[RMDB]
RNA sequence: GGGAACGACUCGAGUAGAGUCGAAAAGAUAUGGAACCAGCAACAGCGAUAUUUCGGAAACGAAAUCAUCGACAUGCUGAUUCCUAAGUCAAAGUACUUGAACAAUGUUCGCAUUGUUCAAGUACAACUGAAUACAUCGCUUCGGCGAUGUAUUCAGAAAAGAAACAACAACAACAAC
Reactivity to 2A3 in 0.01 (KOAc 150mM, MgCl2 10mM, bicine 150mM(pH8.5), 24C), signal-to-noise 2, nucleotides 027 to 126: g010a010u030a030u120g010g010a000a020c030c010a000g010c000a020a170c060a250g110c000g020a000u010a000u010u040u000c010g000g010a020a020a020c000g000a000a010a030u090c070a000u010c030g250a260c120a030u040g000c010u000g000a020u000u000c010c000u010a080a020g060u020c030a050a120a110g010u010a010c010u010u010g010a000a000c010a010a010u030g040u100u180c300g040c130a010u010u000g000u000u010c000a010a000g000u020a010c000a000a010
Reactivity to DMS in 0.01 (KOAc 150mM, MgCl2 10mM, bicine 150mM(pH8.5), 24C), signal-to-noise 2, nucleotides 027 to 126: g020a030u010a230u010g010g010a000a000c010c000a000g010c010a010a060c220a150g000c020g000a020u000a020u000u000u000c000g000g000a100a060a150c000g000a000a000a000u000c170a000u000c000g000a110c050a250u000g000c000u000g040a030u000u000c010c000u000a020a070g000u000c020a090a070a110g000u000a000c000u000u000g000a000a000c000a010a010u000g000u010u020c240g000c000a010u000u000g000u010u000c000a000a000g010u000a000c010a060a070